[RMDB]
RNA sequence: GGGAACGACUCGAGUAGAGUCGAAAAAUUCGCCUCCUAAGUGAAGCUAGCUUCGCCAUUGAAGAGGCUGAAAUCCUCUCCAGACGGCCAAAAUUGCACCAGAUUGAGAAAUUUGAUGCGCGCAUGCCAGACUCUAAAGGUUCGCCUUUAGAGUCUGAAAAGAAACAACAACAACAAC
Reactivity to DMS in 0.01 (KOAc 150mM, MgCl2 10mM, bicine 150mM(pH8.5), 24C), signal-to-noise 2, nucleotides 027 to 126: a200u020u000c040g000c010c000u010c010c010u000a140a100g030u000g010a030a050g000c070u010a180g000c030u000u000c040g020c020c070a120u000u020g020a130a070g000a020g000g000c000u000g010a020a030a080u000c000c010u000c040u010c020c020a100g020a100c090g000g020c060c050a050a070a080a060u000u000g010c000a020c010c000a020g020a030u000u000g000a190g010a130a020a040u000u000u010g000a000u000g030c010g040c280g020c160a090u000g010c130
Reactivity to 2A3 in 0.01 (KOAc 150mM, MgCl2 10mM, bicine 150mM(pH8.5), 24C), signal-to-noise 1, nucleotides 027 to 126: a000u050u040c030g010c000c030u010c000c000u040a070a010g000u020g040a000a020g000c050u090a040g030c020u160u020c020g010c050c000a090u060u100g030a050a030g020a040g020g020c010u040g000a040a000a000u040c000c000u040c000u000c010c010a020g020a130c040g070g020c030c000a000a120a130a230u100u170g000c000a000c050c010a020g050a030u030u070g040a050g040a070a100a060u110u050u020g030a030u090g030c040g000c020g050c040a000u120g000c000
An RNA of 177 nucleotides, treated with DMS and 2A3 and read out base by base. The 2A3 profile rests on 1,290 reads. For DMS the reverse transcriptase was MarathonRT. In probing experiments dimethyl sulfate is read out at A N1 and C N3, which are open when not base-paired. Values cover nucleotides 27 to 126.